[RMDB]
RNA sequence: GGGAACGACUCGAGUAGAGUCGAAAAUGAGUGGUCUAUGUAUCUGCCAGGUUAGCAAACAAUAAAUUUAAUGUAUUUAUCAACUGUGCUUUUAAAAUUAAUUCAUGGUGACACAACAGGGAUAUUUGUACUUUGCCUUUUCUAAAAGGAUUUAGGAAACAAAUACUCAGUUCGCUGAGUAUUUGUUAAAAGAAACAACAACAACAAC
Reactivity to DMS in 0.01 (KOAc 150mM, MgCl2 10mM, bicine 150mM(pH8.5), 24C), signal-to-noise 2, nucleotides 027 to 156: u020g020a100g040u000g000g020u000c030u010a160u000g050u000a050u000c040u000g000c020c040a110g050g010u010u000a040g010c040a070a070a110c050a060a070u000a070a080a110u000u000u010a140a140u010g000u010a060u000u000u010a060u010c000a050a110c070u000g020u000g010c020u000u010u000u050a050a030a130a100u000u000a050a080u010u000c030a050u000g010g050u010g010a050c050a050c050a040a080c060a070g020g000g030a090u010a070u010u000u000g010u000a040c030u000u000u000g020c020c020u010u000u030u010c130u020a050a050a050a040g010g000a100u020u000u000a050g010g000a210
Reactivity to 2A3 in 0.01 (KOAc 150mM, MgCl2 10mM, bicine 150mM(pH8.5), 24C), signal-to-noise 3, nucleotides 027 to 156: u160g010a040g020u040g020g020u000c020u060a120u110g030u020a070u010c020u040g000c020c020a020g020g020u050u070a030g030c030a020a040a160c050a070a150u160a190a120a080u180u170u170a100a070u100g030u020a110u040u140u040a090u110c010a030a050c030u020g010u020g040c000u120u110u020u130a040a130a050a080u080u110a050a080u150u040c020a020u060g010g010u040g010a020c030a000c000a030a110c020a030g040g000g010a010u020a070u100u080u090g020u020a040c020u040u060u070g010c010c000u030u030u060u110c060u110a130a150a000a030g010g010a040u070u130u130a070g000g070a040